The record gives the reactivity of an RNA of 177 nucleotides to DMS and 2A3. The DMS profile rests on 2,347 reads. The reactions ran in a buffer of 150 mM KOAc, 10 mM MgCl2 and 150 mM bicine (pH 8.5), at 24 C.

[RMDB]
RNA sequence: GGGAACGACUCGAGUAGAGUCGAAAAGGAGAUGAUAAUCUCAUUUCUGUGUCACCGUCCAUUGCCUCCUGGUUUACUGGUGAGGCCAUCCGUAUCACUCUUGCUGAAAAGAAGGUUAAGAUUACUGGACAGGAUCACAAUUCGUUGUGAUCCUGUCAAAAGAAACAACAACAACAAC
Reactivity to DMS in 0.01 (KOAc 150mM, MgCl2 10mM, bicine 150mM(pH8.5), 24C), signal-to-noise 3, nucleotides 027 to 126: g010g020a030g020a000u000g010a040u020a140a110u010c300u020c010a080u000u000u000c000u010g010u000g010u010c050a120c030c040g000u000c050c060a060u000u000g010c020c010u000c010c000u000g000g000u000u010u000a070c060u010g000g010u000g010a040g010g000c000c230a050u000c060c040g010u000a060u000c060a030c050u000c030u000u000g000c020u000g000a050a100a100a100g020a080a090g000g010u000u010a040a060g000a070u010u020a060c100u010g000
Reactivity to 2A3 in 0.01 (KOAc 150mM, MgCl2 10mM, bicine 150mM(pH8.5), 24C), signal-to-noise 3, nucleotides 027 to 126: g040g000a040g000a040u040g020a020u100a200a170u080c010u010c040a010u020u030u000c000u030g090u050g070u080c020a050c160c010g020u050c030c030a090u040u120g020c020c000u010c010c020u030g030g010u090u060u080a120c050u060g000g070u170g020a010g010g000c030c000a020u010c020c020g070u090a030u110c010a020c040u030c010u020u080g050c040u080g010a120a120a010a000g040a030a020g040g020u060u080a040a030g020a070u070u100a090c060u140g030
Overview
As a SHAPE reagent, 2A3 marks flexible, mostly unpaired nucleotides at the ribose 2'-OH. Source: RMDB library OK2TRN, as collected in RNAgym.